[RMDB]
RNA sequence: GGGAACGACUCGAGUAGAGUCGAAAAAUGGGGCUGCAACGCCUUGAUCGGCGGCGAUUAGUCAGUUAGUUACAGCCUGCCCACGCUGUUGUGCGCGCCGAAGCUGACGGCCGGAGGAAAAUCCGGCGCGCUAUACCACUUUCGAGUGGUAUAGCGCAAAAGAAACAACAACAACAAC
Reactivity to DMS in 0.01 (KOAc 150mM, MgCl2 10mM, bicine 150mM(pH8.5), 24C), signal-to-noise 4, nucleotides 027 to 126: a100u010g020g010g020g030c020u000g010c060a060a100c060g030c020c020u000u000g020a080u010c170g000g010c050g000g030c050g010a140u000u010a100g010u000c030a050g000u000u000a100g010u000u000a050c020a040g010c010c020u010g010c000c000c010a120c200g000c030u010g000u000u000g020u010g010c040g000c060g010c030c010g000a100a130g020c040u000g000a090c050g010g010c010c020g000g000a030g010g000a080a080a110a130u000c010c010g000g010c050
Reactivity to 2A3 in 0.01 (KOAc 150mM, MgCl2 10mM, bicine 150mM(pH8.5), 24C), signal-to-noise 2, nucleotides 027 to 126: a000u110g060g000g000g000c030u040g010c050a050a030c050g030c020c000u030u040g070a080u050c030g000g020c020g000g020c030g070a170u100u170a060g070u070c050a010g020u030u110a040g020u060u070a060c000a020g000c010c000u060g020c000c000c000a010c020g020c030u030g080u300u110g080u120g040c070g000c030g020c070c000g030a030a020g030c000u030g000a010c010g040g030c000c010g060g000a020g010g190a230a120a030a100u010c010c000g000g000c000